[RMDB]
RNA sequence: GGGAACGACUCGAGUAGAGUCGAAAAACGCUGGGAAGACUGAACCGGCACAGCGAGGUAUACGAUUCUCCUGAAGCGCGCACGGGAGGGUAUACUACCCACCGCUGUGUCAAAAGUCUUCCUGUGCUGAAGCGCGCACGGCAACCGAAAGGUGCGAGAAUCUAUCAAAGUUCGCUUUGAUAGAUUCAAAAGAAACAACAACAACAAC
Reactivity to 2A3 in 0.01 (KOAc 150mM, MgCl2 10mM, bicine 150mM(pH8.5), 24C), signal-to-noise 4, nucleotides 027 to 156: a000c010g000c000u010g000g010g000a000a000g010a010c020u140g140a100a030c040c040g010g000c000a000c000a000g010c000g000a000g000g010u000a010u000a000c090g200a300u300u110c010u020c000c000u040g040a200a060g020c010g000c000g000c000a010c010g010g000g000a000g020g070g000u010a000u000a010c000u040a050c020c100c050a030c010c010g010c000u000g000u000g000u000c000a020a010a000a000g000u000c000u000u000c000c000u000g000u000g000c000u020g020a120a050g000c000g000c000g000c000a000c000g010g010c020a020a020c000c000g030a060a040a050g010g000u010g000c000g000a050
Reactivity to DMS in 0.01 (KOAc 150mM, MgCl2 10mM, bicine 150mM(pH8.5), 24C), signal-to-noise 2, nucleotides 027 to 156: a070c070g020c000u000g010g010g000a100a010g020a090c000u000g000a210a270c140c030g030g060c020a030c010a000g070c010g000a150g030g020u010a060u000a020c020g010a280u000u030c000u000c030c000u020g030a060a060g010c050g040c020g000c010a300c020g000g000g010a070g100g010g020u000a030u000a070c020u000a030c020c010c030a300c080c010g000c000u040g020u020g000u000c020a030a080a300a070g000u000c010u000u000c010c000u010g000u020g040c000u000g000a050a080g030c050g010c020g040c000a300c010g000g000c010a120a120c010c020g010a070a100a130g000g010u010g010c020g000a130